This 177-nucleotide RNA was probed chemically with DMS and 2A3.
For DMS the reverse transcriptase was MarathonRT.
Reactivities are given for positions 27 through 126.
The data come from the RNA Mapping Database (RMDB), library OK1LIB.
High 2A3 reactivity points to a flexible backbone, as in loops and unpaired stretches.
The reactions ran in a buffer of 150 mM KOAc, 10 mM MgCl2 and 150 mM bicine (pH 8.5), at 24 C.

RNA sequence: GGGAACGACUCGAGUAGAGUCGAAAAGAGGACGGACUACUGGCUGUCUCCGGAGUAGGACGUCCGAAGCAGAGGCUGUAUCCGGUCUGCAAACACGACAGGGCUGGAAUGUCACCUGGAGUGGAGAGGGAUGGAUCUGCUUCGGCAGGUCCAUCCCAAAAGAAACAACAACAACAAC
Reactivity to DMS in 0.01 (KOAc 150mM, MgCl2 10mM, bicine 150mM(pH8.5), 24C), signal-to-noise 2, nucleotides 027 to 126: g000a300g000g010a000c020g010g020a010c010u000a000c000u000g000g000c080u000g000u010c030u000c030c070g000g000a030g020u000a000g000g000a050c000g000u010c000c000g020a020a070g040c000a050g000a070g000g030c060u030g000u070a110u000c030c040g000g020u020c060u000g030c010a090a080a150c010a040c070g000a120c040a010g000g000g000c010u010g040g000a060a020u010g010u030c050a140c000c010u020g000g010a200g000u000g000g000a130g000a160
Reactivity to 2A3 in 0.01 (KOAc 150mM, MgCl2 10mM, bicine 150mM(pH8.5), 24C), signal-to-noise 3, nucleotides 027 to 126: g130a010g000g010a000c000g000g000a000c000u010a020c020u050g190g040c040u070g100u220c010u000c050c010g010g000a010g010u060a030g000g000a020c030g000u000c000c000g010a040a030g020c030a010g010a060g050g030c010u100g050u130a190u020c030c000g000g030u010c000u010g030c030a110a030a000c020a000c000g010a000c000a010g050g000g000c040u080g080g160a200a050u140g030u060c070a060c140c010u000g000g010a050g000u040g040g010a100g020a030